Record summary:
This 177-nucleotide RNA was probed chemically with 2A3. It was measured as part of the RMDB library RFM100. Values cover nucleotides 27 to 126. 2A3 adducts were read by reverse transcription with SuperScript II with manganese. The RNA was probed in 150 mM KOAc, 10 mM MgCl2 and 150 mM bicine (pH 8.5) at 24 C. For 2A3, 1,609 sequencing reads were counted.
RNA sequence: GGGAACGACUCGAGUAGAGUCGAAAAAAAUCAUUUCAUCAUAACCCAUAGCUGAAUGAACUUUGACUACUCCUAAACAAAGUAGUAACAAUUUUCAUUUCGUUUCCGGUUUCUUAGAUCGAAUAUUCUGUCACGAAUAAUUCGUUAUUCGUGACAGAAAAGAAACAACAACAACAAC
Reactivity to 2A3 in 0.01 (KOAc 150mM, MgCl2 10mM, bicine 150mM(pH8.5), 24C), signal-to-noise 3, nucleotides 027 to 126: a000a000a000u100c060a030u020u140u070c030a080u000c030a080u050a120a050c000c030c020a060u110a030g030c060u080g010a000a000u000g000a000a000c000u020u000u000g030a000c000u000a000c000u000c020c040u070a040a060a100c050a050a060a000g000u000a000g010u060a000a030c010a000a000u000u020u000u000c000a000u020u000u030c040g000u000u000u040c010c020g050g060u000u040u010c040u050u080a090g010a080u150c080g080a060a040u070a090u150u030